[RMDB]
RNA sequence: GGGAACGACUCGAGUAGAGUCGAAAAGUUUACGCUCCAAGAUCGGUGGAUAGCAGCCCUAUCAAUAUCUAGGAGAACUGUGCUAUGUUUAGAAGAUUAGGUAGGCUCUAAACAGAACAAUUUACCUCAUACGUUAGGACGUUCGCGUCCUAACGAACCUUGACAUCUUGUUCGCAAGAUGUCAAGGAAAAGAAACAACAACAACAAC
Reactivity to 2A3 in 0.01 (KOAc 150mM, MgCl2 10mM, bicine 150mM(pH8.5), 24C), signal-to-noise 4, nucleotides 027 to 156: g030u060u100u110a050c060g000c010u000c010c000a030a030g020a060u090c110g060g220u110g080g030a040u030a030g040c060a030g020c040c000c010u020a010u020c020a050a060u040a020u160c020u070a060g030g000a040g020a040a050c070u140g020u030g070c050u060a020u100g010u000u020u010a080g010a210a010g000a070u090u070a050g010g060u010a010g030g000c010u000c000u020a010a010a000c020a030g070a050a030c070a040a040u070u170u110a050c010c020u090c070a080u090a130c010g000u000u000a000g000g000a000c010g000u030u030c170g010c010g070u000c000c000u000a000a000c000g000a000a010
Reactivity to DMS in 0.01 (KOAc 150mM, MgCl2 10mM, bicine 150mM(pH8.5), 24C), signal-to-noise 1, nucleotides 027 to 156: g020u050u010u000a150c030g000c020u010c010c040a050a100g030a030u000c070g070g040u000g000g000a130u010a040g020c080a180g020c210c070c030u000a120u000c050a090a130u020a060u000c060u000a150g020g000a300g000a040a020c020u010g010u010g010c000u000a100u000g000u000u000u000a000g000a150a070g050a140u000u000a030g080g010u000a170g000g000c070u000c010u000a010a040a030c090a040g020a050a080c030a040a070u000u000u020a070c050c020u000c030a140u020a120c010g000u010u000a010g040g030a050c030g010u000u000c230g080c020g090u000c000c000u020a000a000c000g010a030a030